Source: RMDB library TTRINS, as collected in RNAgym. This 177-nucleotide RNA was probed chemically with DMS. Conditions: 150 mM KOAc, 10 mM MgCl2 and 150 mM bicine (pH 8.5), 24 C. For DMS the reverse transcriptase was MarathonRT.
RNA sequence: GGGAACGACUCGAGUAGAGUCGAAAAGAUAUGGAUCACCUAUUGAAAACUCCAGUACAUCAGAUCCGGAUCGGAAACGAUCCGAAGAUCGACGACGUACGGAGUUUUCAAUAGGUGAUCCUAAGUCGAUAUAUCUAUAGUUCGCUAUAGAUAUAUCAAAAGAAACAACAACAACAAC
Reactivity to DMS in 0.01 (KOAc 150mM, MgCl2 10mM, bicine 150mM(pH8.5), 24C), signal-to-noise 2, nucleotides 027 to 126: g010a070u020a300u000g000g030a020u010c010a010c000c000u000a000u000u000g000a020a010a010a020c010u000c000c000a160g060u030a010c000a060u000c000a210g000a000u000c000c050g000g000a020u010c020g020g000a180a120a180c000g000a000u000c000c000g010a090a060g000a010u000c000g000a120c300g000a010c040g000u000a010c000g010g000a020g010u000u010u000u000c000a000a000u000a000g000g020u000g010a000u000c000c000u000a010a080g000u000c110